[RMDB]
The record gives the reactivity of an RNA of 170 nucleotides to 2A3 and DMS. For 2A3 the reverse transcriptase was SuperScript II with manganese. Source: RMDB library 15KLIB, as collected in RNAgym.
RNA sequence: GGGAACGACUCGAGUAGAGUCGAAAACGGAGUCUAUCUCCAUCUGGUCCGUCCGGGCCCUCUUCGCCGGGGGAGCCCCCUCUCCAUCCCUGUCCUUCUUUCCGAGUAUUCCUUUGAUGUUUCCCAGCAACGCGGGGCUUCGGCCCCGCGAAAAGAAACAACAACAACAAC
Reactivity to 2A3 in 0.01 (KOAc 150mM, MgCl2 10mM, bicine 150mM(pH8.5), 24C), signal-to-noise 2, nucleotides 027 to 129: c050g040g010a000g080u160c120u200a220u070c030u040c000c000a060u070c100u070g010g030u000c030c030g000u000c030c030g020g000g030c000c030c010u040c010u100u110c090g010c000c060g060g000g000g050g010a000g000c000c020c030c030c000u020c000u000c000c000a130u060c020c010c000u020g040u010c020c000u000u020c000u060u060u000c000c000g000a020g040u010a040u000u080c000c000u000u100u080g070a090u120g040u050u030u020c010c000c000a000g060c010a010a010
Reactivity to DMS in 0.01 (KOAc 150mM, MgCl2 10mM, bicine 150mM(pH8.5), 24C), signal-to-noise 2, nucleotides 027 to 129: c060g040g000a100g020u020c250u030a190u060c000u000c000c010a050u030c090u000g000g000u040c060c050g040u040c050c140g050g040g100c080c000c020u010c030u000u000c130g100c220c000g000g000g000g000g000a110g010c020c050c030c080c040u010c000u000c020c010a100u010c020c010c000u000g020u050c070c000u010u010c020u000u000u000c000c070g040a220g050u020a140u050u000c000c040u060u040u000g020a030u010g000u030u030u030c010c050c000a170g000c160a070a180
The DMS profile rests on 5,238 reads.